[RMDB]
Structure probing data (DMS and 2A3) for a 177-nucleotide construct.
RNA sequence: GGGAACGACUCGAGUAGAGUCGAAAACGCUCGGUCAGCAGCCCGGGCAGAUGCGCGCACGUCAUCUUCGUCCAGAAUUCGCCGACGCAGCCGGCAACGAGAUACGUAUAGCGAUCGAGCGCCGGCAGUCGGCUAAUCGUUUCGACGAUUAGCCGACAAAAGAAACAACAACAACAAC
Reactivity to DMS in 0.01 (KOAc 150mM, MgCl2 10mM, bicine 150mM(pH8.5), 24C), signal-to-noise 7, nucleotides 027 to 126: c140g020c030u000c030g010g000u000c050a130g010c090a120g020c200c040c030g000g010g020c020a050g000a040u000g010c060g020c080g010c110a070c060g010u000c070a050u000c020u000u000c050g010u000c050c070a150g000a110a170u000u010c080g010c010c010g010a050c090g020c140a140g010c010c000g000g000c010a090a110c030g010a140g010a070u010a040c020g020u000a130u010a140g020c010g000a080u000c010g000a180g000c200g010c010c000g000g020c040a070
Reactivity to 2A3 in 0.01 (KOAc 150mM, MgCl2 10mM, bicine 150mM(pH8.5), 24C), signal-to-noise 5, nucleotides 027 to 126: c040g010c020u010c030g050g040u070c060a090g020c030a030g030c100c030c000g000g020g000c030a030g020a060u120g030c060g000c020g010c030a040c080g040u050c040a060u000c020u120u120c030g050u020c030c010a030g070a060a130u150u080c070g020c050c020g020a060c050g020c100a020g040c020c010g020g000c010a020a040c030g030a010g010a120u170a150c030g040u110a080u160a300g150c040g010a010u030c010g010a030g050c060g020c030c010g000g000c010a020
Reactivities are rounded to 0.1 and cut off at 0 and 3.